[RMDB]
RNA sequence: GGGAACGACUCGAGUAGAGUCGAAAAAUCCAUCUUCUAAGAUGAUGAUUAGAUCAAGUCAACCACUGCGUCCAUUCACCACUUUACUGGAUCAGUUACAUUCCAGCAAACUGACCCCAUCUCACUCCGCUGCAUCAGUAUUCGUACUGAUGCAGCGAAAAGAAACAACAACAACAAC
Reactivity to 2A3 in 0.01 (KOAc 150mM, MgCl2 10mM, bicine 150mM(pH8.5), 24C), signal-to-noise 2, nucleotides 027 to 126: a020u000c010c010a020u010c010u190u040c030u100a120a090g020a030u080g020a010u030g030a010u000u090a050g020a140u050c060a070a060g080u050c020a040a060c020c020a030c060u070g020c030g030u000c000c020a020u030u060c060a040c050c030a050c020u080u020u120a060c030u060g060g010a070u060c030a020g010u030u030a100c090a070u070u040c020c020a000g000c090a170a030a000c020u010g050a030c030c000c000c010a050u000c020u020c030a050c030u010c000
Reactivity to DMS in 0.01 (KOAc 150mM, MgCl2 10mM, bicine 150mM(pH8.5), 24C), signal-to-noise 2, nucleotides 027 to 126: a030u010c020c000a000u000c020u000u010c180u010a100a060g010a020u000g010a060u000g050a060u010u010a090g000a170u000c060a100a120g000u010c060a060a040c080c060a100c010u010g000c050g010u000c010c040a020u000u010c070a030c060c030a030c100u010u000u000a040c110u010g000g000a090u000c080a100g000u000u000a080c110a150u000u000c040c050a040g000c100a040a050a040c070u000g000a090c020c020c000c100a130u000c030u010c080a090c110u000c090

Structure probing data (2A3 and DMS) for a 177-nucleotide construct. The data come from the RNA Mapping Database (RMDB), library OK2TST. For DMS the reverse transcriptase was MarathonRT. 2A3 is a SHAPE reagent: it acylates the 2'-hydroxyl of flexible nucleotides of all four kinds.